[RMDB]
RNA sequence: GGGAACGACUCGAGUAGAGUCGAAAAAGCUUGGGCAUACCCUCAGGCUGGGGCACAUGCAGGAGCCCCACCCCCAUGCCCCCACCGACUGGCCCAGGCCUCUCUGGGUGCAGACUGCCAACACAGGACACACUCCUUAAUUCGUUAAGGAGUGUGUAAAAGAAACAACAACAACAAC
Reactivity to DMS in 0.01 (KOAc 150mM, MgCl2 10mM, bicine 150mM(pH8.5), 24C), signal-to-noise 4, nucleotides 027 to 126: a070g020c010u000u000g000g000g010c120a170u010a110c190c230c000u000c050a040g010g000c040u000g010g010g010g020c020a090c100a120u010g020c100a060g010g010a100g000c010c010c000c020a150c040c010c020c030c010a150u010g000c090c020c000c020c040a040c120c090g000a170c050u000g000g010c010c000c020a020g010g000c170c120u000c110u010c010u000g010g000g030u000g010c010a020g000a170c070u010g000c040c030a040a060c090a110c090a110g010g000
Reactivity to 2A3 in 0.01 (KOAc 150mM, MgCl2 10mM, bicine 150mM(pH8.5), 24C), signal-to-noise 2, nucleotides 027 to 126: a000g000c010u030u010g000g030g000c130a170u160a270c030c040c020u030c030a000g000g030c040u010g000g010g000g020c040a040c010a060u230g120c060a060g070g110a030g050c020c010c020c000a000c030c000c030c000c000a050u130g050c000c000c020c010c000a020c030c010g070a030c020u020g020g000c030c000c030a010g030g000c000c030u020c000u000c000u000g000g000g000u030g020c000a000g010a040c020u030g050c030c000a100a010c080a050c000a080g050g000
An RNA of 177 nucleotides, treated with DMS and 2A3 and read out base by base. Source: RMDB library OK2TRN, as collected in RNAgym. For 2A3, 1,948 sequencing reads were counted. 2A3 adducts were read by reverse transcription with SuperScript II with manganese. DMS adducts were read by reverse transcription with MarathonRT. For DMS, 3,379 sequencing reads were counted.